The record gives the reactivity of an RNA of 207 nucleotides to DMS and 2A3. Conditions: 150 mM KOAc, 10 mM MgCl2 and 150 mM bicine (pH 8.5), 24 C. DMS adducts were read by reverse transcription with MarathonRT. The data come from the RNA Mapping Database (RMDB), library OK3TST. The DMS profile rests on 2,391 reads.
RNA sequence: GGGAACGACUCGAGUAGAGUCGAAAACUGAUCGGGACGAAUAGCUGGUGGUUAGGUUCGAGAUUAGGGCACAUGCUCGCUUGAAGAAGUGUCUGAAGAAGGUUGGUAAAGCCGGCAUACAGCUGGCUAUGAUCCCGGAGGUGACCUCGGCAGACCUUCUUUUAGCCAAAUUCGUUUGGCUAAAAGAAAAAGAAACAACAACAACAAC
Reactivity to DMS in 0.01 (KOAc 150mM, MgCl2 10mM, bicine 150mM(pH8.5), 24C), signal-to-noise 1, nucleotides 027 to 156: c060u000g010a090u000c020g000g040g000a070c020g010a140a110u000a100g000c060u000g000g030u000g010g040u000u000a110g060g030u020u000c000g050a130g020a170u000u000a130g020g000g080c000a120c030a040u000g020c000u000c040g000c170u030u000g000a120a080g000a060a030g040u010g020u000c020u000g010a060a140g000a070a090g000g020u000u000g000g020u000a050a150a110g010c030c030g000g000c000a150u010a090c190a280g030c030u000g020g040c010u000a040u010g070a100u000c000c000c030g000g000a150g010g010u000g000a120c000c030u000c040g020g040c060a090g010a020c030c020u010
Reactivity to 2A3 in 0.01 (KOAc 150mM, MgCl2 10mM, bicine 150mM(pH8.5), 24C), signal-to-noise 2, nucleotides 027 to 156: c070u030g020a050u100c010g000g020g060a010c040g060a090a000u030a070g000c000u030g050g000u060g010g050u170u060a060g030g030u020u050c050g020a020g010a180u100u120a080g010g030g040c030a060c040a050u300g010c010u070c030g080c100u150u220g000a040a020g020a030a010g030u050g020u000c030u020g030a060a050g050a060a030g050g050u120u130g020g070u080a110a110a020g000c000c050g020g000c070a040u140a080c010a090g000c000u000g000g000c030u040a030u100g020a010u020c000c000c010g020g000a020g000g040u050g010a040c000c000u000c010g030g030c070a040g040a110c010c030u010